[RMDB]
RNA sequence: GGGAACGACUCGAGUAGAGUCGAAAAAUAGGGGCACCCACAAUAGGAUGGCAAAAGGGGACUCGGGUCCGUCGUUCCAUCCUUUUCUUACCUUUUGGCCGGCAUGGCCCCAGCCUCCUCGCUGGCGCAAGUAAGACGUGUUCGCACGUCUUACUUGAAAAGAAACAACAACAACAAC
Reactivity to DMS in 0.01 (KOAc 150mM, MgCl2 10mM, bicine 150mM(pH8.5), 24C), signal-to-noise 1, nucleotides 027 to 126: a080u010a100g000g000g000g050c030a170c040c010c030a070c200a100a020u000a040g010g000a070u010g000g000c170a050a020a070a080g000g000g000g000a020c020u000c240g040g000g020u000c030c050g000u000c060g000u010u000c000c000a040u000c010c000u030u000u000u000c090u010u010a150c120c060u000u000u000u000g010g020c030c030g010g000c040a170u010g000g000c000c000c000c010a130g030c050c000u000c020c040u000c100g010c020u000g000g000c130g000